[RMDB]
RNA sequence: GGGAACGACUCGAGUAGAGUCGAAAAAAAUGCCUCAAUUAGGGAUGUCGGCAGGCCAAGUUCAGAGCUCCGGUUAUUGACCUUCUGAGUAACAGCAUGGAGCUUAAUGUUAAGAAUGCUUGGUAAAGAGACCUACAGAGUUCGCUCUGUAGGUCUCAAAAGAAACAACAACAACAAC
Reactivity to DMS in 0.01 (KOAc 150mM, MgCl2 10mM, bicine 150mM(pH8.5), 24C), signal-to-noise 1, nucleotides 027 to 126: a040a050a110u020g020c040c010u010c130a130a090u010u000a060g000g000g050a080u000g040u000c180g010g030c000a020g040g020c010c040a000a030g000u000u010c130a160g000a090g040c000u000c010c010g010g000u000u000a050u010u000g030a050c070c060u000u010c130u000g010a110g010u000a020a040c060a070g010c130a130u040g040g000a020g010c020u010u000a050a020u010g010u000u000a150a040g010a130a090u000g010c010u010u000g000g000u000a090a060a200
This 177-nucleotide RNA was probed chemically with DMS. Source: RMDB library OK2TRN, as collected in RNAgym. The RNA was probed in 150 mM KOAc, 10 mM MgCl2 and 150 mM bicine (pH 8.5) at 24 C. For DMS, 717 sequencing reads were counted.